The record gives the reactivity of an RNA of 207 nucleotides to DMS and 2A3. For DMS, 2,824 sequencing reads were counted. For 2A3 the reverse transcriptase was SuperScript II with manganese. The 2A3 profile rests on 1,900 reads.
RNA sequence: GGGAACGACUCGAGUAGAGUCGAAAAAAAUGUGCUUUCCGUCAAGUUUAACGACACUUACAGACACGCAUCGAAUGGUGUCCAAUCCUACUCUGUUACGGGAGUAGCGACGUUUUCCUUUUAUCCGAUGGAGAAAGAUGUCAAUCAGAUGGUAACGUCUCUUAUCGGGAUUCGUCCCGAUAAGAGAAAAAGAAACAACAACAACAAC
Reactivity to DMS in 0.01 (KOAc 150mM, MgCl2 10mM, bicine 150mM(pH8.5), 24C), signal-to-noise 3, nucleotides 027 to 156: a030a070a030u000g020u010g020c020u000u000u000c010c020g040u000c060a080a090g000u010u000u020a130a130c120g020a090c030a050c030u000u010a160c080a150g020a100c100a000c060g010c020a070u010c100g040a000a300u010g000g030u000g040u000c010c110a060a050u010c020c030u000a000c010u000c020u000g010u000u000a120c300g000g000g010a020g050u000a040g000c100g030a040c050g000u000u000u000u000c020c020u000u000u010u010a130u000c070c070g000a060u000g010g000a080g010a030a040a030g020a060u000g010u010c020a060a070u000c030a100g000a130u010g000g020u000a060a060c140g000
Reactivity to 2A3 in 0.01 (KOAc 150mM, MgCl2 10mM, bicine 150mM(pH8.5), 24C), signal-to-noise 4, nucleotides 027 to 156: a000a000a010u170g020u040g020c010u050u010u030c010c010g050u050c060a110a100g040u060u180u130a140a050c070g020a000c020a010c040u040u100a030c020a080g030a010c010a010c060g100c050a040u040c050g030a080a040u060g010g000u010g030u010c020c030a040a040u020c000c010u010a010c010u000c000u050g090u170u130a050c120g140g010g000a010g010u010a020g000c080g030a010c030g010u000u010u010u060c050c020u090u100u010u040a100u100c060c060g070a090u100g030g000a030g060a020a030a000g070a100u050g040u020c040a030a060u030c010a040g060a060u050g020g030u020a050a040c030g030